[RMDB]
RNA sequence: GGGAACGACUCGAGUAGAGUCGAAAAUGCUGGGAUUACAGGUGUGAGCCACCGCGCACAGCCAGGGCCGCCUUCUCUUACCAGCCAAAUGUCCCUGGUAGAGGGGGGCCCCUCUUCUGCCCUGCUCACCUUUACCACACUUCGGUGUGGUAAAGGUAAAAGAAACAACAACAACAAC
Reactivity to 2A3 in 0.01 (KOAc 150mM, MgCl2 10mM, bicine 150mM(pH8.5), 24C), signal-to-noise 1, nucleotides 027 to 126: u140g000c000u080g000g030g110a060u100u100a110c030a100g000g060u030g040u050g040a000g060c010c010a030c000c000g030c020g000c040a100c030a030g080c000c020a020g000g010g010c010c040g260c080c000u250u120c020u040c010u040u090a020c010c010a030g060c030c030a170a300a070u230g100u140c010c010c000u010g010g010u040a010g010a000g060g000g010g000g000g000c010c010c000c010u060c090u110u030c040u050g030c020c020c000u000g020c020u050c030
Reactivity to DMS in 0.01 (KOAc 150mM, MgCl2 10mM, bicine 150mM(pH8.5), 24C), signal-to-noise 2, nucleotides 027 to 126: u000g000c010u010g000g010g030a150u010u010a100c160a060g000g000u010g020u000g010a080g030c050c020a040c060c090g000c050g000c080a040c110a020g000c120c260a150g010g000g000c010c000g000c000c000u010u010c020u000c040u000u000a050c010c010a000g010c160c080a070a070a130u010g010u010c110c130c000u000g000g000u010a020g010a010g010g010g020g010g000g010c070c030c000c010u020c030u010u010c070u010g010c020c030c040u010g010c090u000c080